[RMDB]
Chemical mapping of a 177-nucleotide RNA with 2A3 and DMS. Values cover nucleotides 27 to 126.

RNA sequence: GGGAACGACUCGAGUAGAGUCGAAAAUGAUGAACAAAACGGCAAGCGCUUCAAUUACUUAAUGAUGCAGUUGCGCAAAGCACUUAUUAAAAACCAAAACAUUAGUAAUCAAAAGGAAGUGAACCACUAUCAGUAUCUGAUUCGUCAGAUACUGAUAAAAAGAAACAACAACAACAAC
Reactivity to 2A3 in 0.01 (KOAc 150mM, MgCl2 10mM, bicine 150mM(pH8.5), 24C), signal-to-noise 3, nucleotides 027 to 126: u100g030a030u110g030a090a030c030a030a090a030a010c050g050g040c060a100a020g030c060g020c030u030u010c020a030a100u020u010a020c040u150u160a030a030u060g040a020u090g090c050a010g030u160u060g020c040g040c070a080a000a050g000c000a010c000u010u030a020u070u220a100a110a020a010a000c080c030a070a090a020a000c010a010u010u020a010g020u030a020a020u090c080a010a080a060a030g180g010a000a010g020u000g050a080a070c010c000a040c050
Reactivity to DMS in 0.01 (KOAc 150mM, MgCl2 10mM, bicine 150mM(pH8.5), 24C), signal-to-noise 5, nucleotides 027 to 126: u000g010a100u010g010a120a110c060a070a060a100a090c150g010g000c070a100a130g010c060g020c020u010u000c020a080a070u010u000a050c070u000u010a040a040u010g020a080u010g000c120a030g020u010u000g010c090g020c100a070a070a130g010c030a040c080u000u010a130u010u010a020a060a050a080a080c100c090a070a030a070a090c030a010u000u000a030g000u000a010a010u000c120a030a040a050a120g000g000a030a020g010u000g010a050a090c040c010a080c240
The RNA was probed in 150 mM KOAc, 10 mM MgCl2 and 150 mM bicine (pH 8.5) at 24 C.